[RMDB]
RNA sequence: GGGAACGACUCGAGUAGAGUCGAAAAUAACAGGUCUACAGCUGGUCGCGGACCUGCGGGACUACAAUCCCGGGCUGACCAUGGACAGCGCGGCCAAGUUCGCUGCCAUCGCAUCAGGCGCGUACUGCUGUCUUGGAGUCUUCGGACUCCAAGACAGAAAAGAAACAACAACAACAAC
Reactivity to 2A3 in 0.01 (KOAc 150mM, MgCl2 10mM, bicine 150mM(pH8.5), 24C), signal-to-noise 1, nucleotides 027 to 126: u160a020a050c000a020g070g000u010c070u140a110c000a130g010c080u050g030g000u040c000g000c010g000g000a010c000c010u000g000c000g000g000g000a000c040u110a070c260a000a020u000c000c000c000g000g000g000c000u000g000a090c000c140a150u070g030g010a050c010a000g050c010g020c010g060g000c000c020a000a020g040u020u040c000g000c080u220g030c050c010a050u120c110g080c100a300u210c150a020g000g050c000g000c000g020u030a020c010u000g020
Reactivity to DMS in 0.01 (KOAc 150mM, MgCl2 10mM, bicine 150mM(pH8.5), 24C), signal-to-noise 1, nucleotides 027 to 126: u030a110a050c040a030g000g010u000c000u020a090c210a090g000c070u000g030g030u000c010g050c010g020g010a030c000c000u000g020c020g040g000g000a050c060u030a100c300a090a300u010c010c010c000g010g010g020c040u000g000a120c060c150a080u020g000g020a070c000a010g000c000g010c020g030g000c000c000a180a060g000u000u000c000g010c010u010g040c000c010a130u010c090g050c150a090u010c080a230g030g010c010g040c020g000u000a000c030u000g040